Overview
The record gives the reactivity of an RNA of 207 nucleotides to 2A3 and DMS. The RNA was probed in 150 mM KOAc, 10 mM MgCl2 and 150 mM bicine (pH 8.5) at 24 C. It was measured as part of the RMDB library OK3TST. The 2A3 profile rests on 1,531 reads. DMS (dimethyl sulfate) methylates the pairing face of unpaired adenines and cytosines.

RNA sequence: GGGAACGACUCGAGUAGAGUCGAAAAAAGGCUGGCGACACUCUGAUCCUGAAUACCGACGACGGCAAGCCUGUGCGCCGCACAAUCGCCAGCGUUUCGGCUGACGGUAAGACCCUCACGCUAAACGUUGGGUAUAACUUUGACGUUGCGCCUGACACUUAGAAAACUGUUUCGACAGUUUUCUAAGAAAAGAAACAACAACAACAAC
Reactivity to 2A3 in 0.01 (KOAc 150mM, MgCl2 10mM, bicine 150mM(pH8.5), 24C), signal-to-noise 2, nucleotides 027 to 156: a000a000g110g000c050u030g000g020c010g020a040c040a020c070u110c050u040g040a130u070c030c040u040g060a100a060u130a160c050c030g030a040c100g000a010c010g080g000c050a060a020g030c010c040u040g010u050g040c090g030c030c050g040c010a050c030a030a120u050c060g010c040c000a000g000c010g010u020u020u090c060g010g000c000u020g030a040c080g040g030u070a090a060g110a120c020c000c010u010c010a030c130g050c040u060a000a010a040c020g000u000u010g030g010g000u040a050u030a100a060c050u090u110u140g050a020c070g020u030u030g030c050g010c030c000u000g000a000c010a030
Reactivity to DMS in 0.01 (KOAc 150mM, MgCl2 10mM, bicine 150mM(pH8.5), 24C), signal-to-noise 2, nucleotides 027 to 156: a090a050g020g000c070u020g020g000c000g060a160c070a080c050u020c100u000g010a050u000c030c040u010g010a190a160u000a070c010c020g030a130c070g030a150c040g000g000c030a080a120g020c030c040u000g000u000g050c030g010c040c020g070c040a070c050a160a070u000c000g010c000c000a060g020c000g020u000u010u000c100g010g030c010u000g020a040c080g000g040u000a060a120g000a300c020c000c000u000c030a060c050g000c020u000a020a120a160c010g030u000u020g010g000g010u000a070u000a060a060c080u010u000u000g010a110c050g000u000u000g000c030g000c260c010u010g030a130c100a210